[RMDB]
RNA sequence: GGGAACGACUCGAGUAGAGUCGAAAAGAGCAGAUUCGUCUGCUCAAAAGCGUACUACUGUGUGGUAUGGACAUGCUGAAUGGUCCCAAAUAGGACCAUAACAGCAACAGCCAUACGUAACAUCACAGUAUCGCAAACUAGGCGUUUCGACGCCUAGCGGUCUUCAUAGGUUCGCCUAUGAAGACCGAAAAGAAACAACAACAACAAC
Reactivity to DMS in 0.01 (KOAc 150mM, MgCl2 10mM, bicine 150mM(pH8.5), 24C), signal-to-noise 1, nucleotides 027 to 156: g000a010g020c000a000g010a080u000u020c300g010u000c000u020g000c000u040c000a010a060a090a120g000c050g000u010a040c170u000a030c000u010g020u000g000u010g050g000u010a010u000g020g050a030c120a300u000g000c020u000g000a300a070u010g000g000u010c000c010c000a040a140a200u000a060g000g020a010c000c000a010u010a010a090c010a020g000c000a010a070c090a220g020c000c010a000u010a020c000g020u000a040a100c090a040u000c000a010c000a050g020u000a040u000c020g000c050a100a050a070c010u000a020g010g040c020g000u000u000u010c300g040a150c000g010c000c000u010a010g000
Reactivity to 2A3 in 0.01 (KOAc 150mM, MgCl2 10mM, bicine 150mM(pH8.5), 24C), signal-to-noise 5, nucleotides 027 to 156: g020a000g010c010a010g020a000u050u120c210g110u000c070u010g010c000u020c000a000a020a000a000g010c020g040u090a090c040u000a000c000u040g000u010g010u020g040g050u020a010u000g010g000a050c110a170u070g000c000u000g010a030a020u000g000g010u030c010c000c020a180a300a070u300a140g020g000a000c000c000a000u030a120a070c010a000g010c000a030a020c080a040g030c000c000a000u010a000c000g020u040a090a080c020a050u150c000a000c000a000g010u020a030u300c020g010c020a000a130a040c010u000a000g000g000c020g040u050u090u190c230g120a020c000g000c010c010u000a000g000

Record summary:
The data come from the RNA Mapping Database (RMDB), library RNAMAK. Chemical mapping of a 207-nucleotide RNA with DMS and 2A3. For DMS the reverse transcriptase was MarathonRT. The DMS profile rests on 2,524 reads.